[RMDB]
RNA sequence: GGGAACGACUCGAGUAGAGUCGAAAAAAACACCGCGAACUAAUCUUAGCGAACGCUUUGGUAAAGGCAAAUUUUGAUCAAAAGGAUAAAGCAAACAAAGCUUUAACUGAAGCCUUAAAGCCUUACACACAGGAUAAUGUUUCGACAUUAUCCUGUGAAAAGAAACAACAACAACAAC
Reactivity to DMS in 0.01 (KOAc 150mM, MgCl2 10mM, bicine 150mM(pH8.5), 24C), signal-to-noise 3, nucleotides 027 to 126: a030a060a130c080a070c060c020g000c090g000a090a060c040u000a110a070u010c100u000u000a070g000c060g000a090a050c140g010c060u000u010u010g020g030u000a060a050a040g020g000c010a030a080a140u000u000u000u010g000a060u000c130a070a100a130a150g000g000a120u000a020a010a020g000c030a040a080a120c300a070a090a090g000c000u000u000u000a060a090c020u000g000a090a070g000c030c010u000u010a070a050a080g000c010c020u000u010a060c190a230